[RMDB]
RNA sequence: GGGAACGACUCGAGUAGAGUCGAAAAACUCGGUGUCCAAUAAAACUCUCGACCAGGCCCUGGUUUUGGAGAGCCAAGACUUUGAGGUGUGCCUGGCCACAUCCGGUAUCCUCAGUGUUUACGGAGGUGUGCCAGUAUUUUUCGAAAUACUGGCACAAAAAGAAACAACAACAACAAC
Reactivity to 2A3 in 0.01 (KOAc 150mM, MgCl2 10mM, bicine 150mM(pH8.5), 24C), signal-to-noise 2, nucleotides 027 to 126: a000c040u030c020g010g020u050g030u010c030c060a080a060u110a130a150a070a050c030u020c020u050c060g040a020c020c020a040g250g030c070c010c070u050g000g000u010u000u030u090g070g020a230g030a060g120c030c000a010a020g040a020c010u050u170u260g060a050g060g020u130g030u080g060c010c050u060g050g000c030c040a040c000a030u010c000c020g040g030u070a060u060c000c010u040c030a050g020u050g060u210u110u110a070c050g030g040a070g000g060
Reactivity to DMS in 0.01 (KOAc 150mM, MgCl2 10mM, bicine 150mM(pH8.5), 24C), signal-to-noise 3, nucleotides 027 to 126: a050c060u000c040g020g010u000g020u010c020c070a120a130u010a070a070a100a180c060u000c030u000c030g000a050c020c040a060g010g020c080c070c020u000g010g000u000u000u010u010g030g020a170g000a090g020c020c040a040a080g010a030c010u000u010u010g000a050g000g010u010g020u010g010c020c010u000g020g010c040c050a040c120a040u000c020c040g000g020u000a060u010c010c010u000c060a050g010u000g000u000u000u000a060c100g010g010a060g010g010
An RNA of 177 nucleotides, treated with 2A3 and DMS and read out base by base. For DMS, 2,939 sequencing reads were counted. DMS adducts were read by reverse transcription with MarathonRT. For 2A3, 1,671 sequencing reads were counted. The RNA was probed in 150 mM KOAc, 10 mM MgCl2 and 150 mM bicine (pH 8.5) at 24 C.